[RMDB]
RNA sequence: GGGAACGACUCGAGUAGAGUCGAAAAUUAGGUUAGAUGGACAUGGCGUAACUGAUGGCACGGUGGCUGGUUUGUGUGAUCACCGUAAUAUCCGACGCGUGGAAUUAACGAACUGCACCCGCAUCACCAUCCACCAUGAUUUCGAUCAUGGUGGAUGAAAAGAAACAACAACAACAAC
Reactivity to 2A3 in 0.01 (KOAc 150mM, MgCl2 10mM, bicine 150mM(pH8.5), 24C), signal-to-noise 6, nucleotides 027 to 126: u130u060a070g020g040u050u050a050g040a120u080g120g080a030c030a030u140g210g000c030g020u020a110a080c030u070g020a030u040g030g020c040a010c030g020g010u020g030g010c060u090g140g100u080u140u130g210u040g040u050g040a130u040c010a020c030c000g000u030a040a040u020a020u080c030c050g030a030c030g020c030g010u020g010g070a060a090u070u060a090a020c060g020a040a020c020u050g010c010a090c000c010c000g010c040a050u090c020a020c050
Reactivity to DMS in 0.01 (KOAc 150mM, MgCl2 10mM, bicine 150mM(pH8.5), 24C), signal-to-noise 4, nucleotides 027 to 126: u000u030a080g000g010u000u000a070g010a080u030g020g020a110c030a030u020g030g000c020g010u010a090a110c100u030g000a040u000g010g000c280a040c160g010g020u000g000g000c070u000g000g000u010u020u010g000u020g040u020g020a110u020c010a020c000c000g040u000a040a210u060a040u010c110c170g020a060c040g020c070g000u000g000g000a090a070u000u000a050a080c070g000a040a070c050u010g000c070a090c010c000c000g000c110a070u020c060a100c180
An RNA of 177 nucleotides, treated with 2A3 and DMS and read out base by base. Values cover nucleotides 27 to 126. DMS adducts were read by reverse transcription with MarathonRT. The reactions ran in a buffer of 150 mM KOAc, 10 mM MgCl2 and 150 mM bicine (pH 8.5), at 24 C.